[RMDB]
RNA sequence: GGGAACGACUCGAGUAGAGUCGAAAACGGAGGGGACGCGAUGCCAAAGAGUGGGGGAAAUCUCGCGAGGGAAAUCCCAAGAAGGUCGAGAAGUCUCAAGCUACGAGGGGGGACCCCCGAGACGCUGAAGCCAUUCACUUCGGUGAAUGGAAAAGAAACAACAACAACAAC
Reactivity to 2A3 in 0.01 (KOAc 150mM, MgCl2 10mM, bicine 150mM(pH8.5), 24C), signal-to-noise 9, nucleotides 027 to 129: c040g030g010a020g010g010g010g010a000c030g000c040g080a040u120g090c030c040a050a080a010g070a030g040u120g010g020g010g000g030a020a030a030u030c020u010c010g020c040g030a080g000g000g000a020a050a020u050c010c010c000a010a030g030a010a010g020g030u080c030g010a010g020a060a020g070u010c020u020c070a040a020g020c020u060a050c050g010a080g000g020g000g000g020g060a050c000c000c000c000c010g010a020g000a030c050g010c090u080g030a040a010g030
Reactivity to DMS in 0.01 (KOAc 150mM, MgCl2 10mM, bicine 150mM(pH8.5), 24C), signal-to-noise 9, nucleotides 027 to 129: c150g000g000a060g020g020g000g020a040c110g030c100g010a100u030g020c080c110a050a080a070g020a070g060u010g000g000g000g000g000a020a050a130u030c020u000c010g010c150g000a140g030g000g020a040a050a180u020c020c000c020a140a140g010a050a040g000g040u040c050g030a020g000a090a070g000u030c060u000c060a080a060g030c070u000a100c070g000a160g000g000g000g000g000g000a160c030c020c010c020c030g020a070g010a050c160g000c100u000g000a080a080g020
This 170-nucleotide RNA was probed chemically with 2A3 and DMS.
The 2A3 profile rests on 41,239 reads.
DMS adducts were read by reverse transcription with MarathonRT.
Source: RMDB library 15KLIB, as collected in RNAgym.